This 177-nucleotide RNA was probed chemically with DMS and 2A3.

[RMDB]
RNA sequence: GGGAACGACUCGAGUAGAGUCGAAAAGUGAAGAAUUUAUUUGAUUGGAUGCAUUUUUUAAUACCACUAUGUUAUAUGCAUGUCAGUGACUUUUAUAGCCCACCACAUUGUGUGACAGAAGAUAAUCCGUGAGUAUGAUGUUCGCAUCAUACUCACGAAAAGAAACAACAACAACAAC
Reactivity to DMS in 0.01 (KOAc 150mM, MgCl2 10mM, bicine 150mM(pH8.5), 24C), signal-to-noise 2, nucleotides 027 to 126: g030u020g000a090a090g000a180a070u000u060u020a060u040u050u000g040a020u000u000g000g060a030u030g010c030a000u000u000u010u040u010u000a030a020u000a120c120c120a100c160u000a000u010g000u010u000a020u000a030u000g010c050a000u010g000u040c080a050g010u040g000a090c070u000u000u020u010a060u030a150g020c090c000c020a060c100c110a060c050a130u030u030g010u040g000u010g020a050c110a060g000a060a040g010a040u040a110a160u040c130
Reactivity to 2A3 in 0.01 (KOAc 150mM, MgCl2 10mM, bicine 150mM(pH8.5), 24C), signal-to-noise 4, nucleotides 027 to 126: g030u060g050a030a080g040a090a100u120u260u180a180u060u200u160g100a060u000u030g040g040a000u040g020c070a050u020u000u060u020u070u150a200a020u140a110c010c130a050c120u110a020u120g110u100u090a060u010a000u170g070c020a010u010g030u130c060a030g040u060g110a020c010u040u010u000u140a170u160a150g020c000c000c000a010c010c000a070c040a130u190u220g020u010g000u080g110a040c050a090g080a110a000g090a010u110a090a130u130c080
High 2A3 reactivity points to a flexible backbone, as in loops and unpaired stretches. For DMS, 2,467 sequencing reads were counted. The RNA was probed in 150 mM KOAc, 10 mM MgCl2 and 150 mM bicine (pH 8.5) at 24 C. It was measured as part of the RMDB library OK1LIB. DMS adducts were read by reverse transcription with MarathonRT.